[RMDB]
Overview: Structure probing data (2A3 and DMS) for a 177-nucleotide construct. Values cover nucleotides 27 to 126.

RNA sequence: GGGAACGACUCGAGUAGAGUCGAAAACACCUCUCUCACAGUUCGGCUUGAGGCAGCUCACAAGGACAUCGAGACCUUGAAAGAGACUUUUGGUCAGUUACAGAGAUUGGCAGUCCCCGCAUUAGGGCACGUGAACCAUCUUCGGAUGGUUCACGUGAAAAGAAACAACAACAACAAC
Reactivity to 2A3 in 0.01 (KOAc 150mM, MgCl2 10mM, bicine 150mM(pH8.5), 24C), signal-to-noise 1, nucleotides 027 to 126: c010a040c010c010u000c000u000c020u000c000a050c030a100g030u070u010c050g020g000c000u030u090g010a040g000g050c010a020g050c020u030c010a030c030a090a000g020g050a040c010a130u160c120g060a050g060a140c000c000u050u050g100a150a050a020g040a010g020a060c020u130u050u050u000g080g000u000c050a120g000u110u010a030c080a030g040a000g000a060u030u030g000g040c000a000g070u100c000c000c020c000g050c040a120u140u160a030g060g020g000
Reactivity to DMS in 0.01 (KOAc 150mM, MgCl2 10mM, bicine 150mM(pH8.5), 24C), signal-to-noise 2, nucleotides 027 to 126: c120a110c010c000u000c040u000c030u000c050a120c110a090g020u000u000c080g010g010c010u000u000g000a010g000g030c170a100g010c020u000c030a060c060a110a010g030g000a160c050a160u000c170g000a150g010a050c010c030u010u000g000a060a060a070g000a030g000a030c040u000u000u000u000g000g020u000c000a060g020u000u020a060c150a100g000a100g010a030u000u000g000g010c030a140g010u010c030c000c000c040g010c190a070u000u000a100g010g010g010